This 207-nucleotide RNA was probed chemically with DMS and 2A3. 2A3 adducts were read by reverse transcription with SuperScript II with manganese.
[RMDB]
RNA sequence: GGGAACGACUCGAGUAGAGUCGAAAAAUGUAUCAGCAAGAUUUGCUUGUCAUACUUUGGGGACUAUGCAGAACAGACAGUGACCAUCUUAAGGGACAUGCCCCCUACUGGCUUGCUGGUGCUGAGAAACCUAGAUCUCACAACUGUUAGUCAGCCACAUCUGCAACCUAUUCGUAGGUUGCAGAUGAAAAGAAACAACAACAACAAC
Reactivity to DMS in 0.01 (KOAc 150mM, MgCl2 10mM, bicine 150mM(pH8.5), 24C), signal-to-noise 1, nucleotides 027 to 156: a030u010g010u000a040u000c090a060g020c010a060a140g000a190u000u000u010g000c010u000u000g030u000c130a120u000a090c040u020u000u020g010g000g070g000a160c020u000a060u020g010c000a090g030a100a170c060a090g020a100c060a070g000u000g020a110c020c040a060u000c060u000u010a060a060g000g020g000a050c080a110u010g050c000c010c000c000c010u000a070c070u000g020g000c000u000u000g020c000u000g010g000u000g050c060u010g000a080g000a110a090a080c100c090u000a090g010a060u000c030u000c000a050c020a080a150c050u000g010u000u010a090g020u010c010a040g010c020c060a160
Reactivity to 2A3 in 0.01 (KOAc 150mM, MgCl2 10mM, bicine 150mM(pH8.5), 24C), signal-to-noise 3, nucleotides 027 to 156: a000u090g000u010a040u020c020a000g030c000a020a050g090a170u090u160u220g040c040u090u100g080u130c030a060u060a190c080u020u040u140g050g000g000g000a000c020u060a040u140g030c040a030g030a170a040c020a040g160a040c010a020g030u020g080a080c020c030a040u050c060u100u130a070a090g010g010g010a020c030a100u170g010c000c000c000c020c020u020a080c050u020g020g010c000u000u020g000c000u010g000g010u010g020c030u010g000a000g050a030a040a000c000c000u040a070g010a150u020c020u020c000a040c010a000a130c000u010g030u070u050a020g010u040c020a000g070c060c000a050